[RMDB]
RNA sequence: GGGAACGACUCGAGUAGAGUCGAAAAGUCUAGCGAAAGGAUCCCACCCGGGACACACGCAAGUCGCGAAUUACGCCGACCGGCCAAGGUCAAUCGCAGAACUCAACUGCAUGAGUAAGCUAGACGAGAUAUAUCCGACUUUCGAGUCGGAUAUAUCAAAAGAAACAACAACAACAAC
Reactivity to 2A3 in 0.01 (KOAc 150mM, MgCl2 10mM, bicine 150mM(pH8.5), 24C), signal-to-noise 4, nucleotides 027 to 126: g000u000c010u000a000g010c000g110a150a030a000g100g040a100u010c010c010c000a030c010c030c010g030g040g020a020c010a010c000a000c100g040c080a060a030g080u060c030g010c030g040a150a190u220u100a090c050g050c100c040g050a030c000c000g040g000c030c040a080a030g040g000u060c000a010a050u110c060g010c010a010g040a160a090c030u060c190a070a160c040u040g000c020a070u100g020a000g110u030a010a010g000c000u000a000g000a000c010g000a000
Reactivity to DMS in 0.01 (KOAc 150mM, MgCl2 10mM, bicine 150mM(pH8.5), 24C), signal-to-noise 4, nucleotides 027 to 126: g010u000c000u010a010g010c000g010a080a140a110g020g000a070u000c000c000c020a230c300c020c100g000g000g000a080c110a070c050a110c130g000c030a080a020g000u000c050g010c060g010a180a130u000u010a090c080g000c050c040g000a080c010c230g020g010c030c050a170a130g000g000u000c000a070a080u000c080g000c040a040g010a050a080c090u010c180a050a100c020u000g000c020a080u000g010a100g000u010a130a230g000c010u000a000g000a020c020g000a080